[RMDB]
Structure probing data (DMS and 2A3) for a 177-nucleotide construct. 2A3 adducts were read by reverse transcription with SuperScript II with manganese. Conditions: 150 mM KOAc, 10 mM MgCl2 and 150 mM bicine (pH 8.5), 24 C.
RNA sequence: GGGAACGACUCGAGUAGAGUCGAAAAGUCUCCGGGCGGGGUGGAGCCGUCGAUGAGACACCGCCCACCUCCAGCUGUGGAGCUAACUCCCGCUGGGAGGACAUCGGUAGGUGGGCAGUUUGGGUGGGACUAGUUCCAGAUUCGUCUGGAACUAGUCAAAAGAAACAACAACAACAAC
Reactivity to DMS in 0.01 (KOAc 150mM, MgCl2 10mM, bicine 150mM(pH8.5), 24C), signal-to-noise 4, nucleotides 027 to 126: g000u010c010u000c020c180g030g030g010c030g020g000g010g010u050g000g000a150g020c030c050g000u010c010g010a130u020g010a150g020a080c030a110c040c060g000c000c000c010a020c000c010u000c000c000a080g000c000u020g020u030g000g000a020g000c090u020a090a240c020u010c000c000c000g020c160u040g000g010g000a030g000g000a060c120a050u010c160g000g030u030a010g030g030u000g010g000g020c010a030g010u010u000u010g000g000g000u000g000g010
Reactivity to 2A3 in 0.01 (KOAc 150mM, MgCl2 10mM, bicine 150mM(pH8.5), 24C), signal-to-noise 4, nucleotides 027 to 126: g010u010c000u000c020c000g040g030g030c030g020g020g050g020u120g040g080a030g040c020c010g020u010c030g000a130u170g030a010g000a000c020a010c060c020g000c020c000c000a000c000c010u010c000c000a010g000c010u100g050u300g200g050a010g000c030u040a050a100c010u010c000c000c000g090c080u100g000g000g030a050g000g030a040c040a110u110c060g050g040u090a030g020g000u010g000g000g000c010a010g000u030u110u050g090g010g010u090g010g050